[RMDB]
RNA sequence: GGGAACGACUCGAGUAGAGUCGAAAACUAAAAUAGUAGAGUCUGUGGUGAGGAACUUACUACAAGUUGGGGAGGAGGAAAUGUCAAUGGAAGAUUUGCCUGAACAGGUUCUUUCUAGAAAUUUUGAGUAGAUCAAAUGGUUCGCCAUUUGAUCUACAAAAGAAACAACAACAACAAC
Reactivity to DMS in 0.01 (KOAc 150mM, MgCl2 10mM, bicine 150mM(pH8.5), 24C), signal-to-noise 1, nucleotides 027 to 126: c030u000a040a070a070a100u000a060g020u020a060g010a090g020u000c060u000g030u000g010g020u000g000a060g010g000a050a070c060u000u000a040c100u010a040c100a050a060g000u000u000g050g020g020g030a060g000g010a080g000g000a040a030a040u000g000u000c060a070a090u010g000g000a040a020g000a050u020u000u010g010c020c010u000g000a020a080c210a060g020g010u000u000c020u000u000u000c030u010a260g000a040a040a140u000u000u000u010g000a300